An RNA of 207 nucleotides, treated with 2A3 and read out base by base.
For 2A3, 358 sequencing reads were counted.
It was measured as part of the RMDB library OK3TST.

RNA sequence: GGGAACGACUCGAGUAGAGUCGAAAAAGUGAGCUAUGAUCAUGUCACUGCACUCCAACCUGGAUGACAGAAGGAGACCCUGUCACACACAAAAAGUAAAAAGAAGGACCUCUGUCAUUUUGCUAUUUGUUUUCUAUAGGCAUAUAUCCUUUUGUUAAUCAUCACUAGCGUUCGCGCUAGUGAUGAUAAAAGAAACAACAACAACAAC
Reactivity to 2A3 in 0.01 (KOAc 150mM, MgCl2 10mM, bicine 150mM(pH8.5), 24C), signal-to-noise 1, nucleotides 027 to 156: a000g070u050g020a050g010c060u130a010u270g010a020u160c070a010u090g040u120c010a010c060u060g080c010a040c080u120c000c050a000a110c010c010u110g000g020a010u010g010a010c040a060g010a090a090g070g050a060g020a060c010c010c000u040g040u050c010a040c000a020c000a010c020a040a100a130a080a050g050u090a120a100a080a000a030g110a070a080g000g030a080c000c050u000c000u000g030u000c000a000u000u040u030u130g000c080u050a140u090u180u100g060u010u200u000u000c050u080a040u000a070g010g000c100a010u190a010u000a030u300c010c000u110u140u050u090g050u210u210a090